[RMDB]
RNA sequence: GGGAACGACUCGAGUAGAGUCGAAAAGACACCCUUAGCAGAUGACCUCCUCGUUGGUGAGUGUCGGUAAUGUUGUCAGUCACAGGCAACAGUUAACGAUCUGCCUAAAUAAAAAGAGAAGAACAAACCUAAAUACUACCUUCGGGUAGUAUUUAGGAAAAGAAACAACAACAACAAC
Reactivity to 2A3 in 0.01 (KOAc 150mM, MgCl2 10mM, bicine 150mM(pH8.5), 24C), signal-to-noise 7, nucleotides 027 to 126: g080a010c040a110c010c000c000u010u070a010g000c010a000g020a070u040g030a040c000c000u060c000c010u080c070g170u140u250g090g060u200g090a060g020u240g040u020c020g000g000u090a110a050u030g010u000u020g000u000c010a020g110u090c030a020c040a090g000g000c000a010a000c010a020g010u010u110a040a020c040g040a040u000c000u010g000c000c000u120a140a140a080u200a050a100a060a020a000g140a020g040a190a040g040a080a000c030a050a050a020
Reactivity to DMS in 0.01 (KOAc 150mM, MgCl2 10mM, bicine 150mM(pH8.5), 24C), signal-to-noise 4, nucleotides 027 to 126: g020a090c190a090c010c010c000u000u010a090g000c020a010g020a030u010g000a020c040c010u010c040c020u000c100g020u050u060g000g010u030g000a050g000u030g000u020c020g000g010u020a120a080u000g000u000u000g010u000c000a110g000u020c230a090c290a100g000g000c000a000a030c010a020g020u010u030a040a020c050g000a040u000c010u000g000c030c110u020a040a040a070u050a040a070a050a050a070g010a130g020a050a070g020a080a070c170a060a110a130
Annotation: Source: RMDB library OK1LIB, as collected in RNAgym. Structure probing data (2A3 and DMS) for a 177-nucleotide construct. The 2A3 profile rests on 6,297 reads. 2A3 adducts were read by reverse transcription with SuperScript II with manganese.